About this RNA:
Structure probing data (DMS) for a 177-nucleotide construct. It was measured as part of the RMDB library TTRINS.
RNA sequence: GGGAACGACUCGAGUAGAGUCGAAAAUGAUAUGGAGAUGGCCCAUCGUAUUCAACAGCGCACGUAACAUCAAAUCGGAAACGAUUUGUGGUGCGACAUGAAUGCCGUGGGCCAUCUCCUAAGUCUGCUUAACCAGGUUGUUCGCAACCUGGUUAAGAAAAGAAACAACAACAACAAC
Reactivity to DMS in 0.01 (KOAc 150mM, MgCl2 10mM, bicine 150mM(pH8.5), 24C), signal-to-noise 3, nucleotides 027 to 126: u000g000a030u010a300u000g000g000a020g000a010u000g020g020c000c000c000a010u000c300g020u000a010u000u000c010a040a070c250a200g030c030g000c010a010c020g010u000a120a140c160a040u030c010a000a010a000u000c010g010g010a100a110a260c010g010a010u000u000u000g010u000g020g000u000g010c000g020a000c080a150u010g000a010a000u000g010c010c090g050u000g000g010g010c010c000a000u020c000u000c000c000u000a000a040g000u000c000u000g010
For DMS, 2,572 sequencing reads were counted.